[RMDB]
RNA sequence: GGGAACGACUCGAGUAGAGUCGAAAAAGCAAGCCUCUGCAACAGAGGCAGUCAGGAGUCCCACGGCGCACGCGGCCUUCAUGAGGGACGCGGGGGGUAUCUCUGACCCGUCUGCGAUGGCCCUCAGGAGAACCAUGCUUUUCGAAGCAUGGUUCUCAAAAGAAACAACAACAACAAC
Reactivity to 2A3 in 0.01 (KOAc 150mM, MgCl2 10mM, bicine 150mM(pH8.5), 24C), signal-to-noise 1, nucleotides 027 to 126: a010g090c060a090a010g000c000c000u070c020u080g060c160a300a090c040a170g010a000g000g000c010a020g040u000c040a000g030g090a090g060u010c020c010c000a000c070g000g030c020g030c000a020c100g040c070g030g060c030c000u000u070c070a230u080g040a030g000g010g010a020c000g000c000g000g000g000g000g000g010u040a120u120c220u010c060u180g100a050c000c000c040g260u070c000u010g010c010g020a070u050g160g050c030c000c000u020c000a000g030
Reactivity to DMS in 0.01 (KOAc 150mM, MgCl2 10mM, bicine 150mM(pH8.5), 24C), signal-to-noise 2, nucleotides 027 to 126: a090g000c130a120a050g000c020c000u000c000u010g000c160a150a090c190a020g010a010g020g010c020a000g010u020c100a030g020g020a130g010u000c010c010c000a190c070g010g010c060g020c040a070c170g030c030g000g010c030c110u000u000c040a070u030g000a040g020g000g020a220c040g000c000g000g040g010g020g000g010u000a060u020c130u040c130u010g000a040c030c000c010g000u000c020u000g000c060g020a140u020g010g000c000c000c000u000c010a000g000
Description: An RNA of 177 nucleotides, treated with 2A3 and DMS and read out base by base. Values cover nucleotides 27 to 126. The reactions ran in a buffer of 150 mM KOAc, 10 mM MgCl2 and 150 mM bicine (pH 8.5), at 24 C. It was measured as part of the RMDB library OK2TST. The DMS profile rests on 1,157 reads. For DMS the reverse transcriptase was MarathonRT.